RNA sequence: GGGAACGACUCGAGUAGAGUCGAAAAUGCAGAGCCCCUUGCCCCCAGUCACUGGCUCCAACUGCCAGUGUAAUGUGGAGGUGAGUGGGUAGGGGCCAACAGCUGGCAGCUCUGGUGGUAAGGGGGCCACCCAAUGUUAAUUCGUUAACAUUGGGUGAAAAGAAACAACAACAACAAC
Reactivity to 2A3 in 0.01 (KOAc 150mM, MgCl2 10mM, bicine 150mM(pH8.5), 24C), signal-to-noise 7, nucleotides 027 to 126: u160g020c040a010g040a120g220c010c000c000c000u000u020g000c000c000c000c000c000a000g010u020c000a000c030u010g010g000c010u080c140c040a100a130c060u050g000c000c000a010g000u000g000u020a050a060u090g010u030g030g070a220g060g020u300g080a060g010u300g000g000g030u170a170g020g000g030g020c040c010a070a040c040a090g100c040u030g010g000c020a030g010c040u010c010u090g020g000u020g000g020u040a040a060g040g010g000g020g020c010
Reactivity to DMS in 0.01 (KOAc 150mM, MgCl2 10mM, bicine 150mM(pH8.5), 24C), signal-to-noise 7, nucleotides 027 to 126: u010g010c110a160g010a220g020c010c000c000c010u000u000g010c010c010c030c010c010a050g020u010c020a020c020u000g000g010c030u000c140c300a100a140c240u010g020c010c000a010g010u000g010u000a040a080u000g000u010g000g010a140g000g000u010g000a050g000u020g010g010g010u010a060g000g000g000g000c010c020a030a120c180a080g010c150u000g010g010c030a090g010c140u010c020u000g010g010u000g000g000u010a040a050g010g000g000g000g010c090
Source information: Structure probing data (2A3 and DMS) for a 177-nucleotide construct. Reactivities are given for positions 27 through 126. High 2A3 reactivity points to a flexible backbone, as in loops and unpaired stretches. The 2A3 profile rests on 13,913 reads. For DMS, 12,089 sequencing reads were counted. The data come from the RNA Mapping Database (RMDB), library OK2TRN. For DMS the reverse transcriptase was MarathonRT. The reactions ran in a buffer of 150 mM KOAc, 10 mM MgCl2 and 150 mM bicine (pH 8.5), at 24 C.